[RMDB]
RNA sequence: GGGAACGACUCGAGUAGAGUCGAAAAUAGCUGCCAAACUCAGUUGAAACAACUGCCUUCUCCCGGCGAGAUUCAGGCAUUGUGUUCGUACGUUUGGCUCUACUGCGGAUGGCGUGCGAGGAGCCAAAUUGGACCAUAACUUCGGUUAUGGUCCAAUAAAAGAAACAACAACAACAAC
Reactivity to 2A3 in 0.01 (KOAc 150mM, MgCl2 10mM, bicine 150mM(pH8.5), 24C), signal-to-noise 5, nucleotides 027 to 126: u070a020g060c070u030g030c010c020a020a000a010c040u120c150a080g030u100u050g080a020a030a000c010a000a020c120u040g000c010c000u020u000c000u000c000c030c010g270g010c210g000a000g000a010u210u230c090a020g000g010c010a010u010u040g010u010g040u030u020c040g060u110a060c040g000u000u020u020g010g000c000u000c000u000a030c010u050g140c010g080g040a150u090g010g010c050g030u040g010c030g040a080g090g030a020g030c000c000a010a100
Reactivity to DMS in 0.01 (KOAc 150mM, MgCl2 10mM, bicine 150mM(pH8.5), 24C), signal-to-noise 5, nucleotides 027 to 126: u020a060g000c120u000g000c000c010a020a050a080c040u010c170a180g020u020u030g000a030a070a010c000a020a020c200u000g010c010c000u000u020c020u000c000c050c190g010g010c160g000a050g010a090u050u050c220a020g010g000c010a040u010u030g000u010g000u000u000c020g010u020a050c150g010u000u000u000g000g010c000u000c030u000a050c080u020g000c030g000g000a100u000g000g010c040g000u010g000c070g000a090g010g010a110g010c020c050a020a070